[RMDB]
RNA sequence: GGGAACGACUCGAGUAGAGUCGAAAAUACACUUUACGUGUGCUGCUUUCAUUACUUUGUCCCAAACCAGGCACGCGUAAUUAAAGGCCAGUUUGGCCAGGUCCGCGUUAUCGAUGGUCACCAAUAAACGAUCUUACCUAUUCGUAGGUAAGAUCGUAAAAGAAACAACAACAACAAC
Reactivity to DMS in 0.01 (KOAc 150mM, MgCl2 10mM, bicine 150mM(pH8.5), 24C), signal-to-noise 6, nucleotides 027 to 126: u000a090c170a130c120u000u000u000a010c010g020u000g010u000g020c020u000g010c200u000u000u010c130a100u010u000a070c120u010u000u010g010u000c010c010c000a070a080a080c130c100a130g010g010c020a000c000g010c010g010u000a000a010u000u000a070a100a110g010g010c010c010a120g000u010u010u010g010g010c000c010a030g020g010u000c040c010g000c060g020u000u000a070u010c060g020a060u000g010g010u000c070a080c040c070a080a100u020a050a090
Reactivity to 2A3 in 0.01 (KOAc 150mM, MgCl2 10mM, bicine 150mM(pH8.5), 24C), signal-to-noise 5, nucleotides 027 to 126: u080a000c040a020c070u060u030u030a010c000g000u000g000u000g000c000u020g010c000u090u150u170c050a140u050u100a080c060u090u080u150g050u070c010c000c000a030a030a020c100c070a070g030g010c010a000c010g000c000g000u010a010a000u060u080a120a040a000g010g000c020c020a070g140u120u220u140g060g000c000c010a010g040g010u000c010c010g020c030g060u060u120a130u160c040g050a090u050g000g020u030c030a020c050c020a050a070u120a110a130